RNA sequence: GGGAACGACUCGAGUAGAGUCGAAAACGAGCUGCCAGACGAAGAUGGUCGUGCCGAGCAACCCUGUUGCCAGCCCGGCCACUGUCACCGGACGCCAACUUGCGAGGCCAGGCACGACGAAUGCGGCCGCACCCUUUGGUUUCGACCAAAGGGUGCGAAAAGAAACAACAACAACAAC
Reactivity to DMS in 0.01 (KOAc 150mM, MgCl2 10mM, bicine 150mM(pH8.5), 24C), signal-to-noise 2, nucleotides 027 to 126: c030g040a140g030c010u000g010c050c060a030g010a190c100g030a100a100g020a130u000g010g030u010c010g040u000g000c000c020g000a300g020c030a030a030c060c080c060u040g020u010u000g000c040c010a140g020c010c020c000g000g000c080c100a000c120u000g020u010c140a100c020c020g020g010a080c040g000c300c020a000a000c060u000u000g000c010g030a070g040g000c030c020a250g050g020c010a030c000g050a020c070g000a150a020u010g050c020g030g010c020